RNA sequence: GGGAACGACUCGAGUAGAGUCGAAAACACUAAAUUAAAUCAAACUAGCUUAAGUUUAGCGUGUCUGUCCGCAUGCUUAAGUGAAAUUAAAGACGAGACUAAACGUGUAGUACUGAAGGUAGAGUAAUUUCGGACGGGGGUUCAACUCCCCCCAGCUCCUUAUUUAAGGCUUCGGCCUUAAAUAAGGAAAAGAAACAACAACAACAAC
Reactivity to 2A3 in 0.01 (KOAc 150mM, MgCl2 10mM, bicine 150mM(pH8.5), 24C), signal-to-noise 1, nucleotides 027 to 156: c060a010c050u200a090a080a140u220u120a140a060a070u130c080a030a020a230c020u020a020g020c010u000u000a020a000g000u100u070u230a080g040c010g010u030g030u040c040u060g060u030c010c000g000c020a110u040g000c000u010u010a000a000g000u000g060a010a010a010u150u160a020a050a000g040a010c060g100a020g010a040c060u050a050a060a100c000g040u020g020u160a040g050u030a030c020u040g060a140a070g000g040u080a030g030a040g020u030a060a010u070u110u210c040g000g000a010c000g000g000g010g000g030u020u100c000a000a050c040u050c020c030c000c010c000c000a010g060c050u000